[RMDB]
Source: RMDB library OK3TST, as collected in RNAgym. An RNA of 207 nucleotides, treated with 2A3 and DMS and read out base by base. The DMS profile rests on 2,356 reads.
RNA sequence: GGGAACGACUCGAGUAGAGUCGAAAAAACAAGUCUUCAAGUGAGGCUGCCACAGCUUGUCUGAGAACCACACUUUGAGACCCACCGCUCUGGUGUUAAUGUCAGAGUCACAGGCUACCACAGGUUAGACCGCUGCUUUCUUCUGCAAACCUCAUUCGGUUAAACUCAUGUUCGCAUGAGUUUAACCAAAAGAAACAACAACAACAAC
Reactivity to 2A3 in 0.01 (KOAc 150mM, MgCl2 10mM, bicine 150mM(pH8.5), 24C), signal-to-noise 4, nucleotides 027 to 156: a000a000c140a050a010g010u010c020u060u040c050a050a000g020u000g030a030g030g000c060u090g110c080c010a160c000a050g010c020u180u280g070u140c020u030g040a040g030a070a010c020c000a030c010a010c000u040u040u070g030a030g010a060c010c030c010a040c000c040g010c020u020c030u050g000g050u020g070u170u160a110a100u210g030u050c020a010g010a010g010u020c010a030c030a070g030g000c030u040a040c010c030a060c040a090g010g010u020u050a030g030a070c000c060g050c050u040g010c000u070u080u030c010u070u000c030u040g070c050a080a060a130c010c080u170c020a100u270u300c090
Reactivity to DMS in 0.01 (KOAc 150mM, MgCl2 10mM, bicine 150mM(pH8.5), 24C), signal-to-noise 1, nucleotides 027 to 156: a140a050c020a070a120g050u000c040u000u010c140a070a110g030u000g020a090g030g060c020u000g040c020c030a290c030a050g030c010u000u010g010u020c020u020g020a280g000a130a040c030c010a120c080a030c010u000u000u010g000a070g010a060c050c030c040a060c080c020g000c020u000c020u000g000g000u000g000u020u000a060a100u000g000u000c030a040g000a070g010u010c080a120c060a050g000g040c000u000a150c030c020a080c020a070g050g010u000u000a100g000a140c030c070g040c020u000g020c000u010u010u000c030u000u000c050u000g000c010a050a080a070c030c040u000c030a250u000u000c100
The 2A3 profile rests on 2,991 reads. Conditions: 150 mM KOAc, 10 mM MgCl2 and 150 mM bicine (pH 8.5), 24 C. For 2A3 the reverse transcriptase was SuperScript II with manganese.